[RMDB]
RNA sequence: GGGAACGACUCGAGUAGAGUCGAAAAACGGUGUUACCACUGACCGGUCACAAAAACUUCAUCUGCGCAUCGUCCCGAUCCAAACAGAAGACAAUGACAGCUUUUUCAAAGCCAGAUUUACCCUAAAUGUGGGUGAUAACAGGAUUGUGGAUAUGGGCCUUGUUUCACUAUUCGUAGUGAAACAAGGAAAAGAAACAACAACAACAAC
Reactivity to DMS in 0.01 (KOAc 150mM, MgCl2 10mM, bicine 150mM(pH8.5), 24C), signal-to-noise 3, nucleotides 027 to 156: a070c060g010g010u000g000u010u010a070c090c010a110c040u010g000a090c030c000g000g000u020c030a110c090a050a030a050a060a070c050u000u010c020a090u010c050u000g020c020g010c010a060u010c030g020u000c010c010c020g000a070u000c050c040a100a140a210c070a130g000a080a060g020a060c080a090a060u000g000a110c110a070g020c030u000u000u000u000u000c140a090a070a080g000c000c020a080g010a170u000u010u000a020c010c010c020u000a090a080a140u000g010u000g020g010g020u000g000a060u010a060a070c070a140g000g010a110u000u000g000u000g000g000a090u010a070u000g020g050g010
Reactivity to 2A3 in 0.01 (KOAc 150mM, MgCl2 10mM, bicine 150mM(pH8.5), 24C), signal-to-noise 7, nucleotides 027 to 156: a010c020g010g020u030g050u080u090a060c020c020a030c070u050g080a060c010c050g030g040u080c060a020c060a080a100a050a090a040c050u150u070c050a100u040c050u110g020c050g020c050a050u030c060g020u010c020c010c000g010a030u000c010c000a050a080a110c050a070g150a140a010g060a090c070a080a100u120g030a030c020a050g020c010u060u060u030u130u180c130a100a040a010g000c000c020a020g010a070u020u020u070a020c010c000c010u100a190a130a100u250g020u160g030g010g010u010g020a030u040a100a070c020a050g000g030a020u030u060g040u160g040g020a000u030a050u100g040g000g010